Chemical mapping of a 177-nucleotide RNA with DMS. The reactions ran in a buffer of 150 mM KOAc, 10 mM MgCl2 and 150 mM bicine (pH 8.5), at 24 C.

RNA sequence: GGGAACGACUCGAGUAGAGUCGAAAACUCUGCAUAUUCGUAUGCAGAGAAAUAACGGUCGGCUCAUGGAGCUAGUCGAACAUGCUGCUCGACCUUUUGGUAAAAACCGGAGGUUCGCCUCCGGUAACAACGCUGCAUCUUUCGAGAUGCAGCGUUGAAAAGAAACAACAACAACAAC
Reactivity to DMS in 0.01 (KOAc 150mM, MgCl2 10mM, bicine 150mM(pH8.5), 24C), signal-to-noise 1, nucleotides 027 to 126: c000u010c000u030g000c000a000u010a030u000u010c190g040u000a000u000g020c010a020g000a000g030a010a110a080u000a130a060c130g010g020u000c000g010g000c020u010c010a020u000g000g010a300g010c090u000a040g040u000c100g010a080a110c000a000u000g030c110u000g040c000u010c010g010a010c000c000u010u000u010u000g060g050u030a060a050a030a020a030c000c000g000g000a010g000g000u010u010c180g040c000c000u000c000c000g000g010u000a010a120